RNA sequence: GGGAACGACUCGAGUAGAGUCGAAAAGGAUAACCCUUCCCUGUUCCUCCGUUUGGAGGGCAGAUAGAACAUGAUGACUGGAGAUGCAUGAAAUGUGACUAAUGUCUCUGUGUAAUCAGGACUUGCACUAACUAAGCGCAUUCGUGCGCUUAGUUAGAAAAGAAACAACAACAACAAC
Reactivity to 2A3 in 0.01 (KOAc 150mM, MgCl2 10mM, bicine 150mM(pH8.5), 24C), signal-to-noise 7, nucleotides 027 to 126: g050g020a050u090a180a130c000c000c000u020u020c000c000c000u010g010u240u300c000c000u020c010c020g180u110u260u300g010g000a000g020g010g000c000a000g000a020u150a050g100a030a030c040a100u070g000a000u040g030a030c020u030g000g010a050g030a020u070g030c030a040u040g130a150a200a080u240g050u040g060a080c090u170a140a050u150g010u020c010u000c000u050g100u030g040u150a040a040u050c000a010g020g020a010c000u050u070g020c060a010
Reactivity to DMS in 0.01 (KOAc 150mM, MgCl2 10mM, bicine 150mM(pH8.5), 24C), signal-to-noise 4, nucleotides 027 to 126: g000g010a200u030a040a180c070c010c040u010u010c020c020c010u010g040u020u030c000c000u020c000c000g020u060u020u080g020g010a020g000g000g000c060a010g000a100u020a070g030a050a140c080a070u010g010a060u020g000a040c040u030g010g000a010g000a040u010g020c050a050u000g000a060a070a120u010g020u000g010a070c100u000a070a080u040g020u000c010u000c000u010g000u010g000u010a040a070u020c010a050g010g010a130c080u000u000g010c130a170

Source: RMDB libraries RFM100 and RFMREP, as collected in RNAgym. An RNA of 177 nucleotides, treated with 2A3 and DMS and read out base by base. Reactivities are given for positions 27 through 126. For DMS the reverse transcriptase was MarathonRT.